[RMDB]
RNA sequence: GGGAACGACUCGAGUAGAGUCGAAAAGAUAUGGAAUGUAACGUGAGAACUUUGAUCAAUUUACAUCAUGUCUUUCGGAAACGAAAGAGCAUGAUGUAAAUUGGGAGUUCUCUACAUUCCUAAGUCACCCUAAACAGGAGUUCGCUCCUGUUUAGGGAAAAGAAACAACAACAACAAC
Reactivity to 2A3 in 0.01 (KOAc 150mM, MgCl2 10mM, bicine 150mM(pH8.5), 24C), signal-to-noise 2, nucleotides 027 to 126: g040a000u110a070u190g000g020a040a000u020g020u050a210a250c300g240u200g080a000g000a040a010c060u210u230u240g180a150u300c020a020a010u000u040u030a040c000a020u000c010a010u020g050u020c000u030u000u020c030g040g020a120a110a030c010g000a010a010a000g010a040g180c000a000u000g000a000u000g010u030a000a010a000u010u000g000g010g020a010g000u000u000c020u000c010u000a000c010a000u000u000c000c000u030a100a010g000u000c020a090
Reactivity to DMS in 0.01 (KOAc 150mM, MgCl2 10mM, bicine 150mM(pH8.5), 24C), signal-to-noise 2, nucleotides 027 to 126: g020a060u000a300u010g010g000a010a000u000g000u010a080a230c240g020u010g000a020g000a030a010c010u000u000u030g000a170u010c000a030a000u000u000u000a000c010a010u000c000a000u000g000u000c000u000u000u010c000g000g000a150a080a230c010g030a020a000a000g000a050g010c000a000u020g000a000u000g020u000a010a000a000u020u000g000g000g000a010g000u000u000c000u000c000u000a020c020a000u000u020c000c000u030a020a120g010u020c080a210
Chemical mapping of a 177-nucleotide RNA with 2A3 and DMS.
Values cover nucleotides 27 to 126.
The RNA was probed in 150 mM KOAc, 10 mM MgCl2 and 150 mM bicine (pH 8.5) at 24 C.